[RMDB]
RNA sequence: GGGAACGACUCGAGUAGAGUCGAAAAGUAUAUGACUUCGGUCAUAUACAAAGGCCGAUCGAAGGCCAACUGCGACUUCAACGCCAACCGAUCAAGAAGAAAAAAGAUGCACCUUCGGGUGCAUCAAGACAAGGAUUAAGUUCGCUUAAUCCUUGUCAAAAGAAACAACAACAACAAC
Reactivity to 2A3 in 0.01 (KOAc 150mM, MgCl2 10mM, bicine 150mM(pH8.5), 24C), signal-to-noise 4, nucleotides 027 to 126: g000u000a010u000a000u010g000a000c000u020u050c180g060g000u000c000a010u000a010u000a010c000a010a110a020g000g020c010c010g030a150u160c120g110a250a060g010g020c000c000a010a010c020u050g000c010g060a050c020u050u020c050a130a020c030g010c010c010a050a040c020c010g070a090u120c080a050a070g050a050a030g020a040a180a010a010a000a020g000a000u000g000c000a010c010c010u050u070c230g070g000g000u000g000c000a010u000c000a000a000
Reactivity to DMS in 0.01 (KOAc 150mM, MgCl2 10mM, bicine 150mM(pH8.5), 24C), signal-to-noise 3, nucleotides 027 to 126: g010u000a000u010a000u000g000a000c010u000u000c170g030g010u000c000a010u000a000u000a020c000a070a110a120g010g010c020c010g000a110u010c180g010a150a150g010g010c000c010a030a070c140u010g010c040g010a060c060u000u010c030a060a080c120g000c010c070a060a190c060c030g000a040u000c110a080a090g000a090a080g040a020a040a050a080a130a060g000a010u000g000c000a000c000c000u000u010c210g040g000g010u000g010c000a000u000c000a020a070